An RNA of 207 nucleotides, treated with DMS and 2A3 and read out base by base. The reactions ran in a buffer of 150 mM KOAc, 10 mM MgCl2 and 150 mM bicine (pH 8.5), at 24 C. The DMS profile rests on 4,576 reads.

[RMDB]
RNA sequence: GGGAACGACUCGAGUAGAGUCGAAAACCUUCCUCGCGGCCAGACACGGACUGCACGCCCUUUGGGCAAGGGAUGGUUCUCCAUCUCGCACCGUGCCCUGUUGUGGCAACCGUCUUUUCUCCGUCGCUAAUUUGUCCUGGGCAGAAAUGUCUGCUCGCUAUUACAAUUUCUUCGGAAAUUGUAAUAGAAAAGAAACAACAACAACAAC
Reactivity to DMS in 0.01 (KOAc 150mM, MgCl2 10mM, bicine 150mM(pH8.5), 24C), signal-to-noise 1, nucleotides 027 to 156: c030c040u000u010c010c000u000c060g040c030g020g000c030c070a080g000a050c070a030c130g000g020a080c060u010g000c000a110c090g020c010c000c000u010u010u040g040g050g050c020a260a180g000g000g010a010u000g000g020u000u000c280u010c060c000a000u000c000u000c030g000c080a100c030c050g040u000g000c010c010c010u020g030u000u010g030u010g010g020c050a090a070c050c040g030u000c020u000u000u000u000c030u010c050c040g020u000c010g010c020u000a080a220u000u010u010g000u000c030c010u010g010g010g010c000a060g000a040a140a130u000g030u000c000u000g010c020u010c010g010
Reactivity to 2A3 in 0.01 (KOAc 150mM, MgCl2 10mM, bicine 150mM(pH8.5), 24C), signal-to-noise 2, nucleotides 027 to 156: c020c000u030u060c030c020u050c040g020c020g030g000c020c020a030g010a030c020a020c080g030g040a110c080u090g020c090a050c100g000c010c000c000u240u300u180g010g000g000c030a030a040g010g000g000a000u000g000g000u170u100c100u040c070c000a020u010c000u020c030g050c020a110c060c070g090u030g010c030c000c000u120g040u170u080g080u170g040g000c010a020a020c020c020g030u060c010u060u060u060u050c040u030c020c020g060u080c010g000c040u060a090a170u080u070u190g060u050c030c020u040g000g000g000c020a000g080a040a200a050u200g110u060c000u000g010c000u000c010g000